[RMDB]
RNA sequence: GGGAACGACUCGAGUAGAGUCGAAAAACUGGACUACGGUCCAGAUGGCAGUGAUGAUUGAGAAUGUCAUGCACCACUCUGAUUUCGUGCUGAUAACUAUCUCUACCCAUAUUAUAUCUGAGCCUAACACGCACAAUACUUUCGAGUAUUGUGCGUGAAAAGAAACAACAACAACAAC
Reactivity to DMS in 0.01 (KOAc 150mM, MgCl2 10mM, bicine 150mM(pH8.5), 24C), signal-to-noise 3, nucleotides 027 to 126: a090c000u000g000g020a020c020u000a110c130g050g000u000c000c010a000g000a040u020g000g000c020a090g010u020g010a070u010g020a060u010u000g000a030g000a030a080u010g030u000c020a030u040g000c030a010c020c110a080c160u040c150u000g010a130u010u010u020c260g010u010g000c030u010g000a020u000a050a110c100u040a100u000c010u000c020u000a100c050c000c010a130u020a090u040u000a050u010a080u000c020u000g000a110g010c030c000u000a050a180
Reactivity to 2A3 in 0.01 (KOAc 150mM, MgCl2 10mM, bicine 150mM(pH8.5), 24C), signal-to-noise 8, nucleotides 027 to 126: a000c000u000g000g000a000c010u020a040c230g100g000u000c000c000a000g010a010u030g040g010c030a060g040u040g090a100u010g010a020u120u130g020a020g040a080a050u050g000u020c000a020u190g000c010a010c010c020a080c050u140c100u130g200a300u060u140u150c050g000u030g010c030u010g010a040u030a100a090c050u080a090u120c010u000c010u040a080c000c010c040a030u080a070u220u140a110u040a040u050c060u060g060a020g030c000c000u040a070a010

Structure probing data (DMS and 2A3) for a 177-nucleotide construct. Values are in units of 0.01, from 0 to 300, in steps of 10. Source: RMDB libraries RFM100 and RFMREP, as collected in RNAgym. DMS adducts were read by reverse transcription with MarathonRT. The reactions ran in a buffer of 150 mM KOAc, 10 mM MgCl2 and 150 mM bicine (pH 8.5), at 24 C.